[RMDB]
RNA sequence: GGGAACGACUCGAGUAGAGUCGAAAAUUGAAGAAAUGGACUACUUGAUUCGUAAAGUGGGGCGGAAUGCGUGAGGCUGGUUUCACAGAGCAGUGAACAGCUCCCGCUCUGUGCAGUGGAAGGAUAAUGGGUCGGUGUCUUAUCAAGUUCAGUAACGCCUCGUAUUGUGGUUCGCCACAAUACGAGGAAAAGAAACAACAACAACAAC
Reactivity to 2A3 in 0.01 (KOAc 150mM, MgCl2 10mM, bicine 150mM(pH8.5), 24C), signal-to-noise 1, nucleotides 027 to 156: u070u040g030a010a000g040a010a190a010u140g040g080a010c010u010a000c000u030u010g090a060u130u160c160g020u170a060a090a040g000u130g030g000g000g000c030g000g120a100a070u140g120c110g030u040g050a060g050g000c000u020g020g160u000u150u110c060a060c000a000g060a020g300c050a010g020u000g050a050a010c010a000g000c000u080c000c090c000g030c030u080c030u010g060u030g010c000a030g050u020g030g030a050a070g020g020a000u010a040a130u180g000g000g000u010c020g000g000u010g000u030c020u020u000a100u030c020a000a160g000u120u030c090a070g000u000a100a000c000g040
Structure probing data (2A3) for a 207-nucleotide construct.
Values cover nucleotides 27 to 156.
The 2A3 profile rests on 444 reads.
It was measured as part of the RMDB library ARCHII.